[RMDB]
RNA sequence: GGGAACGACUCGAGUAGAGUCGAAAACCCCGCAAGCGAGGGCUUGGCUGAUCUUAAUGAGGCCAGGUGCGACGCGGGGGCAACAGCCCGGCCUCAGCGAGGUCCCCUCGGGAGGUGCCUUCCGCGUUUCGGUACCUAACUUCGGUUAGGUACCGAAAAAAGAAACAACAACAACAAC
Reactivity to 2A3 in 0.01 (KOAc 150mM, MgCl2 10mM, bicine 150mM(pH8.5), 24C), signal-to-noise 2, nucleotides 027 to 126: c000c000c010c000g050c050a110a060g030c010g080a070g000g110g000c010u020u010g030g000c000u020g050a090u030c080u130u250a250a120u250g010a010g020g010c000c010a020g030g000u090g020c010g000a000c000g000c000g010g000g000g000g000c000a070a030c010a040g010c000c000c000g000g000c000c000u010c030a060g210c030g140a000g000g030u230c130c030c010c010u040c000g010g010g000a020g000g000u040g000c000c000u220u300c040c000g000c000g000u000
Reactivity to DMS in 0.01 (KOAc 150mM, MgCl2 10mM, bicine 150mM(pH8.5), 24C), signal-to-noise 1, nucleotides 027 to 126: c100c020c010c120g000c150a040a040g000c020g010a120g060g030g000c010u000u010g000g100c030u000g000a140u000c190u010u070a090a130u000g000a300g000g000c000c000a080g000g010u000g000c000g000a080c010g000c020g000g000g000g000g000c020a020a080c060a020g120c070c040c030g000g000c000c000u020c020a110g000c150g000a030g000g030u020c100c000c050c050u010c090g000g000g000a120g050g000u000g010c070c000u000u000c000c000g010c000g000u000